An RNA of 177 nucleotides, treated with DMS and 2A3 and read out base by base. Conditions: 150 mM KOAc, 10 mM MgCl2 and 150 mM bicine (pH 8.5), 24 C.
RNA sequence: GGGAACGACUCGAGUAGAGUCGAAAACGGCGCGCGGCAUGAGCAGCACGGGCAGCGAGGGCGCGUCGGUGGGCGGCCGGAACAACGGCAAGGGGCUGCGCCACUUCAGCAUGAAGGUGUGCGAGAACACACGUCAUCAUUUCGAUGAUGACGUGUGAAAAGAAACAACAACAACAAC
Reactivity to DMS in 0.01 (KOAc 150mM, MgCl2 10mM, bicine 150mM(pH8.5), 24C), signal-to-noise 3, nucleotides 027 to 126: c060g000g010c030g010c040g010c050g010g020c040a080u000g010a240g020c100a070g000c070a150c110g000g020g000c050a080g000c050g000a130g010g000g000c030g000c020g010u010c030g010g030u000g010g000g010c080g000g000c010c010g040g000a070a080c210a110a120c040g000g010c020a090a070g000g000g000g000c050u000g000c030g000c010c000a030c020u000u000c010a120g030c210a090u010g000a030a040g000g000u000g010u010g000c000g000a150g000a100a140
Reactivity to 2A3 in 0.01 (KOAc 150mM, MgCl2 10mM, bicine 150mM(pH8.5), 24C), signal-to-noise 1, nucleotides 027 to 126: c000g000g000c000g000c000g000c010g050g040c090a120u130g080a030g020c060a010g030c080a050c080g050g130g000c020a010g010c020g050a100g010g070g030c040g000c000g020u040c020g040g010u030g020g000g020c090g030g000c000c000g000g040a110a040c080a060a030c030g000g000c000a060a070g020g020g000g020c010u100g000c020g030c000c000a020c000u070u010c010a220g060c090a190u210g050a060a000g050g020u050g040u070g020c010g000a070g010a120a020

Annotation
For DMS the reverse transcriptase was MarathonRT.